Background: Conditions: 150 mM KOAc, 10 mM MgCl2 and 150 mM bicine (pH 8.5), 24 C. Structure probing data (2A3 and DMS) for a 177-nucleotide construct. For 2A3 the reverse transcriptase was SuperScript II with manganese. DMS adducts were read by reverse transcription with MarathonRT. Values are in units of 0.01, from 0 to 300, in steps of 10. Values cover nucleotides 27 to 126.
RNA sequence: GGGAACGACUCGAGUAGAGUCGAAAACGGAUACCUAGCAAGACGAGUGGAAGAGCGUCUGUCCACUGUGAAACGUUUGAAGCUGAUAAUGAGGCUUUUAGUUGUCGAUGAAAACGUUCUACCAACCACGUGCCAUCGAUUUCGAUCGAUGGCACGUAAAAGAAACAACAACAACAAC
Reactivity to 2A3 in 0.01 (KOAc 150mM, MgCl2 10mM, bicine 150mM(pH8.5), 24C), signal-to-noise 1, nucleotides 027 to 126: c040g000g010a110u170a090c000c110u030a030g020c020a000a070g030a000c000g120a070g100u060g010g000a030a030g010a070g070c000g140u100c010u000g060u070c000c000a010c000u100g020u000g210a210a000a000c000g000u000u030u050g000a020a000g020c060u060g000a060u010a300a000u270g130a000g020g000c000u080u030u000u070a070g010u010u100g000u090c040g050a180u140g150a050a000a000a050c020g000u000u080c050u140a080c000c080a010a060c020c080
Reactivity to DMS in 0.01 (KOAc 150mM, MgCl2 10mM, bicine 150mM(pH8.5), 24C), signal-to-noise 1, nucleotides 027 to 126: c040g000g000a020u030a130c000c000u000a110g060c010a040a030g000a140c140g000a060g080u000g000g000a150a150g000a100g000c000g000u010c040u070g000u000c010c000a060c060u000g000u040g000a030a110a110c000g000u040u000u000g010a040a060g000c020u080g000a160u010a030a090u040g000a090g000g000c050u000u000u000u000a170g000u000u000g000u000c030g000a090u000g000a110a000a030a000c060g000u000u010c000u000a110c160c300a000a100c250c100